[RMDB]
The data come from the RNA Mapping Database (RMDB), library RSTRND. An RNA of 207 nucleotides, treated with DMS and 2A3 and read out base by base. For DMS, 1,818 sequencing reads were counted. For 2A3 the reverse transcriptase was SuperScript II with manganese. 2A3 is a SHAPE reagent: it acylates the 2'-hydroxyl of flexible nucleotides of all four kinds. The RNA was probed in 150 mM KOAc, 10 mM MgCl2 and 150 mM bicine (pH 8.5) at 24 C.
RNA sequence: GGGAACGACUCGAGUAGAGUCGAAAAUCAAAUUGCGGGAAAGCCCUAAAGCUUUGCUAACCAAGCUAAGUGUGAAAGCACUCAGUGGCCGGGUUAAAGACCUCGGGUAUGGUAAAAUCAGCAAAGAUGCAACAAUGGGCAAUCCGCAGCCAAGCUCGAGAUAAAGUAAGUUCGCUUACUUUAUCUCAAAAGAAACAACAACAACAAC
Reactivity to DMS in 0.01 (KOAc 150mM, MgCl2 10mM, bicine 150mM(pH8.5), 24C), signal-to-noise 1, nucleotides 027 to 156: u000c040a100a100a190u030u000g040c000g030g030g020a100a080a300g000c010c000c000u000a050a050a080g020c020u000u010u000g000c030u000a000a040c020c010a190a270g040c020u000a000a000g030u000g070u000g000a150a140a300g030c020a000c000u000c000a000g020u000g020g030c000c010g000g030g000u000u020a090a080a250g010a130c100c000u030c040g060g000g090u000a020u000g010g030u000a040a020a000a040u000c140a040g040c000a010a030a010g000a030u000g000c130a080a100c080a030a060u000g000g000g010c020a100a140u010c000c000g050c020a020g020c050c010a040a180g010c070u030c120
Reactivity to 2A3 in 0.01 (KOAc 150mM, MgCl2 10mM, bicine 150mM(pH8.5), 24C), signal-to-noise 2, nucleotides 027 to 156: u010c020a040a030a040u100u020g000c010g000g010g020a080a110a030g000c000c010c010u020a030a040a040g000c000u000u000u000g010c000u010a000a010c010c120a040a010g000c000u000a000a010g000u000g000u020g090a100a070a040g010c000a000c000u000c020a000g000u040g070g000c000c000g000g000g020u020u050a080a040a030g040a030c020c050u120c160g010g020g000u080a180u100g010g000u010a010a020a000a020u030c030a020g000c000a000a000a010g010a000u020g040c300a300a010c000a030a030u010g000g000g000c000a000a040u020c000c000g000c010a000g000c000c010a050a020g050c040u100c140